Chemical mapping of a 177-nucleotide RNA with DMS and 2A3. Conditions: 150 mM KOAc, 10 mM MgCl2 and 150 mM bicine (pH 8.5), 24 C.
RNA sequence: GGGAACGACUCGAGUAGAGUCGAAAAAGAUAUGGACGUAAUUGUCAGCUGCAAUGGCUGCAUCGAUCGAGCUCGGAAACGAGCUCGGGAGCAGCCAGCAGCUUGGAUUUAUUACGUCCUAAGUCAAGGCUCAUGUAUUGUUCGCAAUACAUGAGCCAAAAGAAACAACAACAACAAC
Reactivity to DMS in 0.01 (KOAc 150mM, MgCl2 10mM, bicine 150mM(pH8.5), 24C), signal-to-noise 1, nucleotides 027 to 126: a100g000a050u000a300u000g020g010a010c010g010u000a000a050u000u000g000u010c000a050g000c010u010g000c010a240a060u010g010g020c010u010g030c000a300u000c120g020a070u000c000g000a000g010c000u000c000g020g000a070a060a240c020g000a010g020c010u000c010g000g010g020a040g010c000a020g000c000c040a010g010c000a010g020c010u000u010g020g030a010u000u020u000a010u000u000a010c010g000u000c000c000u000a000a060g000u010c020a140a120
Reactivity to 2A3 in 0.01 (KOAc 150mM, MgCl2 10mM, bicine 150mM(pH8.5), 24C), signal-to-noise 1, nucleotides 027 to 126: a000g070a050u100a060u140g020g030a000c000g030u000a000a030u010u030g020u070c010a020g010c000u050g000c050a180a300u150g010g010c010u030g020c010a300u300c090g050a030u110c000g000a000g080c000u000c030g020g040a020a100a070c000g000a010g000c070u010c000g000g000g000a000g030c010a000g000c020c000a000g000c000a000g020c040u000u040g000g000a000u300u300u080a010u040u030a010c000g000u000c000c010u000a060a000g000u020c040a060a100